[RMDB]
RNA sequence: GGGAACGACUCGAGUAGAGUCGAAAAGAAACUGGGGACAUCAAGUUUCCAAAGAAGAAUGGUAAGGGGUAUAUGACUCUUGAUCUUGGAAUCCCUGGAUUGACACCUGAGUUAAUCAGAGAAGUCAAGACGUUAUACCGUUCGCGGUAUAACGUCUAAAAGAAACAACAACAACAAC
Reactivity to DMS in 0.01 (KOAc 150mM, MgCl2 10mM, bicine 150mM(pH8.5), 24C), signal-to-noise 3, nucleotides 027 to 126: g000a050a080a110c050u020g020g050g060g020a040c220a100u050c140a020a100g000u020u000u020c000c020a020a080a210g010a160a260g010a160a070u010g000g000u010a070a000g000g000g000g020u000a080u040a090u020g000a050c010u000c000u000u010g000a060u010c000u030u000g010g010a100a200u000c000c000c050u000g000g020a120u020u020g000a050c000a180c040c010u030g010a000g030u030u030a080a100u000c000a010g000a080g010a140a050g000u000c010a020
Reactivity to 2A3 in 0.01 (KOAc 150mM, MgCl2 10mM, bicine 150mM(pH8.5), 24C), signal-to-noise 2, nucleotides 027 to 126: g090a020a030a000c020u010g000g000g000g000a030c020a060u120c050a060a050g050u050u110u030c050c020a040a090a000g280a090a000g100a090a030u070g050g000u090a090a070g160g030g010g050u110a130u000a060u300g250a060c000u000c000u020u050g000a000u070c010u040u020g010g060a090a060u030c000c000c000u010g010g060a070u000u040g000a010c020a020c110c030u040g000a020g010u190u300a120a070u030c000a000g020a000g020a200a000g050u000c060a030